[RMDB]
RNA sequence: GGGAACGACUCGAGUAGAGUCGAAAAGGGGAGACGAACUAUUCAAUGUCAGCUUGGGUGUAGUGCCAGAACCGUACUCAGUAAUGCUGUCAUUGCUGUUGGUGCUUACCAGCUCUUCAGUACUGGAAUAGCUUCAGACCUCGAGAGUUUAUGACUAAUAGCCAUACUCAUUCGUGAGUAUGGCUAUAAAAGAAACAACAACAACAAC
Reactivity to DMS in 0.01 (KOAc 150mM, MgCl2 10mM, bicine 150mM(pH8.5), 24C), signal-to-noise 2, nucleotides 027 to 156: g050g000g000g010a110g030a180c110g030a050a050c020u000a040u010u010c020a070a060u000g020u000c140a040g000c040u010u020g010g020g030u000g020u030a040g060u010g020c020c120a160g000a090a080c080c070g000u000a090c070u000c000a080g010u010a060a080u000g030c090u020g020u000c000a040u000u000g030c010u010g030u000u010g020g010u010g010c010u010u010a070c050c030a060g000c010u000c080u000u000c090a130g020u000a090c080u000g000g000a070a080u000a030g000c060u000u010c040a210g000a190c040c000u000c020g000a070g010a130g030u020u000u010a060u030g010a090c090u000a120
Reactivity to 2A3 in 0.01 (KOAc 150mM, MgCl2 10mM, bicine 150mM(pH8.5), 24C), signal-to-noise 3, nucleotides 027 to 156: g040g000g000g000a220g000a020c100g010a000a030c030u030a010u010u030c020a090a100u180g050u050c040a030g040c040u150u170g050g020g030u250g070u190a040g020u000g030c000c020a050g020a060a040c040c040g030u060a060c040u000c030a020g020u030a030a050u110g130c210u130g130u300c010a030u010u090g020c000u010g040u050u030g020g070u010g010c000u010u020a040c000c000a010g000c000u000c080u130u100c040a060g050u110a110c080u110g110g000a000a000u000a010g040c060u000u010c000a000g010a030c000c000u000c030g040a060g000a000g000u000u090u260a160u150g050a080c070u030a020